[RMDB]
RNA sequence: GGGAACGACUCGAGUAGAGUCGAAAAGAUAUGGACACCUGUAAGGGAGCUGUCUCGGAAACGAGCAGCGAGGAUCUUAUGGUGUCCUAAGUCAAAACUCCAAGUCCGGUUCGCCGGACUUGGAGAAGUUUAACUACUGGUUCGCCAGUAGUUAAACAAAAGAAACAACAACAACAAC
Reactivity to DMS in 0.01 (KOAc 150mM, MgCl2 10mM, bicine 150mM(pH8.5), 24C), signal-to-noise 2, nucleotides 027 to 126: g000a020u000a300u000g000g010a010c000a000c010c000u020g040u000a010a010g000g000g000a050g000c000u000g000u010c010u000c000g010g000a110a060a220c010g010a010g010c010a000g010c010g000a060g010g010a020u010c000u000u000a020u000g000g000u000g010u000c000c010u000a000a050g010u000c030a110a100a160a120c000u000c000c000a010a030g000u000c010c000g010g020u000u010c230g040c000c020g000g010a000c000u000u010g000g000a010g000a010a030
Reactivity to 2A3 in 0.01 (KOAc 150mM, MgCl2 10mM, bicine 150mM(pH8.5), 24C), signal-to-noise 1, nucleotides 027 to 126: g000a000u060a040u150g010g000a010c010a010c020c090u150g070u130a040a000g000g070g020a010g000c010u060g100u300c000u010c030g040g030a080a100a070c010g000a010g000c020a000g000c000g020a060g010g020a020u000c010u000u010a000u040g000g000u000g000u020c000c000u000a020a000g010u010c020a010a000a050a170c000u000c000c010a000a010g010u000c000c000g010g090u040u130c300g030c110c000g030g000a010c000u010u000g000g000a000g000a000a000